Conditions: 150 mM KOAc, 10 mM MgCl2 and 150 mM bicine (pH 8.5), 24 C.
Structure probing data (DMS and 2A3) for a 177-nucleotide construct.
For DMS, 1,893 sequencing reads were counted.
Values cover nucleotides 27 to 126.
The 2A3 profile rests on 2,663 reads.

RNA sequence: GGGAACGACUCGAGUAGAGUCGAAAAGAUAUGGAACCACUGGCCUCCGAUAAGCAUCGUUCGGAAACGAACGAAUGCUUUUGACGGAGGGUGGUUCCUAAGUCAAAUCGACCGUUCGCGGUCGAAAGAUCUUAAGGUCCUUCGGGACCUUAAGAUCAAAAGAAACAACAACAACAAC
Reactivity to DMS in 0.01 (KOAc 150mM, MgCl2 10mM, bicine 150mM(pH8.5), 24C), signal-to-noise 1, nucleotides 027 to 126: g000a000u000a020u000g020g010a020a000c000c010a020c000u030g050g000c020c000u000c000c000g010a150u010a030a010g010c010a020u000c010g010u000u000c000g010g010a010a000a040c000g010a000a000c000g010a040a050u010g000c010u000u000u010u010g000a140c090g040g040a020g010g000g030u000g000g010u000u000c000c000u010a000a070g010u010c010a080a120a200u000c020g000a030c010c000g000u010u030c260g020c070g040g000u020c000g000a020a050a110
Reactivity to 2A3 in 0.01 (KOAc 150mM, MgCl2 10mM, bicine 150mM(pH8.5), 24C), signal-to-noise 2, nucleotides 027 to 126: g000a030u020a020u100g000g000a010a000c010c010a010c140u140g300g040c010c000u000c030c010g210a300u160a300a000g000c020a000u010c000g000u000u000c000g030g000a030a010a020c010g010a010a000c000g000a010a040u000g000c000u050u040u040u060g300a120c040g000g000a000g020g020g000u000g010g000u000u000c000c000u020a010a000g010u000c010a000a000a300u030c010g000a020c050c000g010u050u040c300g000c070g080g020u010c010g000a040a030a010